[RMDB]
RNA sequence: GGGAACGACUCGAGUAGAGUCGAAAAUCCUAAGUCCCUGGGAGAUCGUAACAUAGCGUUGAAAUUGGUCGGAAACGACCAAUGGAGCUAUGGAUAAGAUCGAAGAACAGGGAUAUGGAAAAACACGCUCAAUCCCUCUUCGGAGGGAUUGAGCGUGCUUUCCAUUGUAGUUCGCUACAAUGGAAAGAAAAGAAACAACAACAACAAC
Reactivity to 2A3 in 0.01 (KOAc 150mM, MgCl2 10mM, bicine 150mM(pH8.5), 24C), signal-to-noise 1, nucleotides 027 to 156: u020c000c010u020a090a040g020u010c000c000c000u010g000g000g020a100g000a000u000c000g000u010a030a030c000a000u000a000g010c010g210u200u050g020a010a020a000u000u000g000g000u000c000g020g030a080a100a080c010g000a000c010c000a000a000u000g000g000a010g010c000u000a000u020g000g000a000u010a010a000g010a000u000c010g020a050a010g000a020a020c000a000g000g020g010a000u030a030u040g000g020a050a080a020a010a010c000a000c020g010c000u000c010a010a000u010c000c030c000u010c020u070u080c290g060g000a000g000g000g000a010u000u000g000a020g000c010g000u000g010
Reactivity to DMS in 0.01 (KOAc 150mM, MgCl2 10mM, bicine 150mM(pH8.5), 24C), signal-to-noise 1, nucleotides 027 to 156: u010c010c020u000a070a270g010u000c000c000c000u040g000g000g020a300g000a050u020c010g010u000a110a300c030a020u000a000g000c000g000u010u030g000a130a220a050u000u000g020g040u010c020g040g010a150a110a300c020g030a020c000c000a000a000u010g000g020a260g030c000u020a000u000g000g000a090u000a120a160g010a000u020c000g000a130a130g060a150a170c050a050g000g000g040a000u000a020u020g010g000a020a090a040a230a140c010a010c020g000c000u070c010a040a040u000c020c000c040u000c000u000u010c300g000g000a060g000g070g010a000u020u000g000a000g020c040g010u010g010